The data come from the RNA Mapping Database (RMDB), library M2RFPK. The record gives the reactivity of an RNA of 207 nucleotides to 2A3. 2A3 adducts were read by reverse transcription with SuperScript II with manganese. The RNA was probed in 150 mM KOAc, 10 mM MgCl2 and 150 mM bicine (pH 8.5) at 24 C.
RNA sequence: GGGAACGACUCGAGUAGAGUCGAAAAACUGACGGUACGCCGUCAGAACGGUAGAAAAGAUGGUUUGAAAACCACGCCUUCUACCAAUACAGUAAAUAAAUAGGCGGAGCGGUCAUACGUGACCGCAAAAACAUAUUCAGCUUCGGCUGAAUAUGAAGCAGUUUGUGUAGUUCGCUACACAAACUGCAAAAGAAACAACAACAACAAC
Reactivity to 2A3 in 0.01 (KOAc 150mM, MgCl2 10mM, bicine 150mM(pH8.5), 24C), signal-to-noise 1, nucleotides 027 to 156: a010c000u000g000a000c000g010g010u030a000c300g010c010c000g000u000c000a040g000a060a000c030g030g000u000a000g010a000a030a020a000g100a300u020g010g090u050u100u260g130a120a090a000a000c000c000a000c000g010c020c000u000u010c010u000a000c000c000a000a050u160a010c000a000g150u210a070a040a090u140a060a100a070u140a060g000g000c000g000g000a010g010c010g000g000u010c010a030u010a100c270g140u060g000a000c000c000g010c000a010a010a010a010a010c000a000u010a000u000u000c000a000g000c020u010u190c270g060g000c000u000g000a000a000u000a000u010g000a000a020